[RMDB]
RNA sequence: GGGAACGACUCGAGUAGAGUCGAAAAGAUAUGGAGCUGACCCAGAGACGAAGAGCAAUGAUGUCGGAAACGAUUGAGCUUGAACACUCUGCAGCUCCUAAGUCAAACCCAUGGUUCGCCAUGGGAAGAGUGCCUUAAUCUUCGGAUUAAGGCACUCAAAAGAAACAACAACAACAAC
Reactivity to 2A3 in 0.01 (KOAc 150mM, MgCl2 10mM, bicine 150mM(pH8.5), 24C), signal-to-noise 2, nucleotides 027 to 126: g040a020u020a010u110g000g000a000g000c000u030g040a160c010c080c140a010g000a010g000a050c300g240a300a300g010a090g000c000a020a110u230g060a050u210g140u060c000g000g000a000a010a030c000g020a010u000u090g000a030g000c020u000u070g160a040a000c080a010c140u010c010u000g000c010a000g000c000u050c000c000u000a010a000g010u000c020a020a030a240c000c000c000a000u000g030g000u120u080c300g050c060c000a010u010g000g000g000a000a040
Reactivity to DMS in 0.01 (KOAc 150mM, MgCl2 10mM, bicine 150mM(pH8.5), 24C), signal-to-noise 1, nucleotides 027 to 126: g000a110u000a260u010g020g000a010g000c000u000g010a230c180c260c080a020g020a010g000a190c210g040a300a240g000a000g000c000a110a020u030g000a180u040g000u000c000g010g000a240a080a120c030g010a030u000u000g000a100g000c000u000u000g000a060a080c290a040c000u000c000u000g000c010a020g020c000u010c000c000u000a020a090g000u000c020a080a060a130c000c000c000a000u000g000g000u000u000c150g040c000c000a030u000g000g000g010a020a020
This 177-nucleotide RNA was probed chemically with 2A3 and DMS. It was measured as part of the RMDB library TTRDEL. For DMS the reverse transcriptase was MarathonRT.